[RMDB]
Annotation:
This 207-nucleotide RNA was probed chemically with 2A3. Reactivities are given for positions 27 through 156. For 2A3 the reverse transcriptase was SuperScript II with manganese. Conditions: 150 mM KOAc, 10 mM MgCl2 and 150 mM bicine (pH 8.5), 24 C. For 2A3, 1,229 sequencing reads were counted.
RNA sequence: GGGAACGACUCGAGUAGAGUCGAAAACAAAAUGAUAUCAAAAAAAUCGUAGCCUUCUCAACUUCAAGCCAACUAGGCUUGAUAAUAGUGACAAUCGGCAUCAACCAACCCCACCUAGCAUUUCUCCACAUCUGCAUGCACGCUUUCUUCAAAGCAACCUAAAUAUUUUGUUCGCAAAAUAUUUAGGAAAAGAAACAACAACAACAAC
Reactivity to 2A3 in 0.01 (KOAc 150mM, MgCl2 10mM, bicine 150mM(pH8.5), 24C), signal-to-noise 2, nucleotides 027 to 156: c020a010a070a030a070u130g050a040u070a060u250c110a080a080a050a030a040a050a080u100c040g030u010a100g000c000c010u080u040c000u040c020a030a100c030u030u030c020a010a010g000c050c010a100a130c160u180a100g030g020c020u000u000g000a000u010a030a040u030a010g040u010g020a010c050a050a090u090c070g050g000c040a060u080c030a050a110c020c000a020a020c020c000c010c000a020c000c020u020a000g000c020a020u010u000u070c020u000c000c000a000c000a100u070c030u020g030c020a040u060g040c040a030c080g020c020u050u060u050c000u100u120c030a020a050a040g180c010a020a030